[RMDB]
RNA sequence: GGGAACGACUCGAGUAGAGUCGAAAACCACACAUACCUUCGGGUAUGUGUGGAAAAAAGAUAUGGAUUUAGGGAGCCUGGUAUCGGAAACGAUACGCAGGCAUCGAUCUAACUGUCCUAAGUCAAAAAACAAAGGAUCCUUCGGGAUCCUUUGUAACUAAUUGUACGGUUUCGACCGUACAAUUAGAAAAGAAACAACAACAACAAC
Reactivity to 2A3 in 0.01 (KOAc 150mM, MgCl2 10mM, bicine 150mM(pH8.5), 24C), signal-to-noise 2, nucleotides 027 to 156: c000c000a010c000a000c000a000u010a000c000c000u040u070c290g140g000g000u000a000u000g000u010g010u000g000g000a100a010a000a000a000a020g020a010u080a050u130g030g000a000u010u040u030a010g010g010g010a040g000c000c010u000g000g020u020a000u020c010g000g000a060a030a020c020g000a000u010a020c180g000c120a000g000g000c010a020u040c010g000a000u020c010u030a030a090c150u150g030u050c010c010u030a070a000g030u020c030a000a040a070a110a000a020c010a000a010a000g030g000a000u000c020c000u100u150c300g070g020g000a000u010c000c000u010u010u000g000u000a000a000
Reactivity to DMS in 0.01 (KOAc 150mM, MgCl2 10mM, bicine 150mM(pH8.5), 24C), signal-to-noise 2, nucleotides 027 to 156: c010c000a010c000a030c000a010u000a010c010c010u000u040c300g050g030g030u000a010u010g030u000g030u000g000g010a000a000a030a120a070a090g000a110u010a120u020g010g000a020u010u000u010a050g000g020g020a200g030c010c010u000g040g000u000a000u030c000g010g010a200a150a220c010g010a030u000a000c010g040c000a000g040g060c010a020u000c050g010a110u010c030u000a040a100c220u020g060u000c010c000u000a040a070g020u000c010a000a030a120a140a100a040c010a020a010a020g020g000a010u000c010c000u000u010c300g080g010g030a000u000c010c010u000u000u010g020u000a020a140

Overview: The data come from the RNA Mapping Database (RMDB), library RNAMAK. This 207-nucleotide RNA was probed chemically with 2A3 and DMS. DMS adducts were read by reverse transcription with MarathonRT. The RNA was probed in 150 mM KOAc, 10 mM MgCl2 and 150 mM bicine (pH 8.5) at 24 C. For DMS, 3,256 sequencing reads were counted.